An RNA of 177 nucleotides, treated with DMS and 2A3 and read out base by base. For 2A3, 3,268 sequencing reads were counted.
RNA sequence: GGGAACGACUCGAGUAGAGUCGAAAACGCGAAUCCAAAUACAUCAUGAUGCACGCACCCAGUGAACGUCUGGACGAAAUCAUCACGCUGCUGCCGGGUGCCGAGCGCCCUACCAUUCUGCCAUUGGGAUUCCUAUAGCGUUCGCGCUAUAGGAAUCAAAAGAAACAACAACAACAAC
Reactivity to DMS in 0.01 (KOAc 150mM, MgCl2 10mM, bicine 150mM(pH8.5), 24C), signal-to-noise 3, nucleotides 027 to 126: c080g040c070g020a110a070u010c030c060a070a090a080u010a100c080a080u010c080a060u000g020a110u010g000c120a040c070g000c040a080c040c000c030a070g010u000g000a070a090c120g010u010c030u000g000g010a050c090g000a060a070a150u000c060a020u000c050a080c100g020c020u000g000c070u010g020c070c060g000g010g020u000g020c050c070g010a100g000c050g010c050c010c010u000a080c040c030a070u000u010c040u000g010c060c050a090u000u000g010g020
Reactivity to 2A3 in 0.01 (KOAc 150mM, MgCl2 10mM, bicine 150mM(pH8.5), 24C), signal-to-noise 3, nucleotides 027 to 126: c040g000c020g020a030a040u030c010c020a050a070a070u230a080c060a070u100c020a060u160g040a030u090g040c070a020c080g030c020a040c010c000c000a010g020u030g100a150a080c050g080u020c020u070g000g060a020c010g100a050a030a070u120c040a020u050c010a020c070g050c040u060g010c020u010g020c040c010g050g000g000u050g000c010c030g060a050g040c020g000c020c030c000u040a080c020c000a050u090u030c010u050g080c010c020a060u090u110g150g030